[RMDB]
RNA sequence: GGGAACGACUCGAGUAGAGUCGAAAAUCAAAAUAUGGUUAUCAAUAAUGCAUGCUUAUAAUAUGAAGAAUGCUUUAUCCAUGUCUUAUUUUUCAUAUUACAUAACAUUCUUAUUCUUUUAACAGGUCCAGGAGAGCCUCAGAUUAUUUUUUGUAGAGUAACAAUAUCAUUUCGAUGAUAUUGUUACAAAAGAAACAACAACAACAAC
Reactivity to 2A3 in 0.01 (KOAc 150mM, MgCl2 10mM, bicine 150mM(pH8.5), 24C), signal-to-noise 3, nucleotides 027 to 156: u090c020a070a020a050a020u170a060u060g030g010u090u080a070u120c030a040a080u070a130a030u140g000c020a010u010g000c010u060u050a010u040a130a050u050a030u050g010a000a010g000a010a010u030g020c000u130u170u090a110u130c100c070a060u070g060u040c040u110u160a050u010u020u010u010u000c010a000u010a020u040u070a040c010a020u130a050a030c010a030u050u000c010u040u070a080u130u020c020u020u160u010u010a060a050c020a040g010g010u020c020c030a030g070g010a050g020a010g020c000c020u030c020a010g040a080u090u080a070u100u230u060u070u130u160g060u150a050g020a010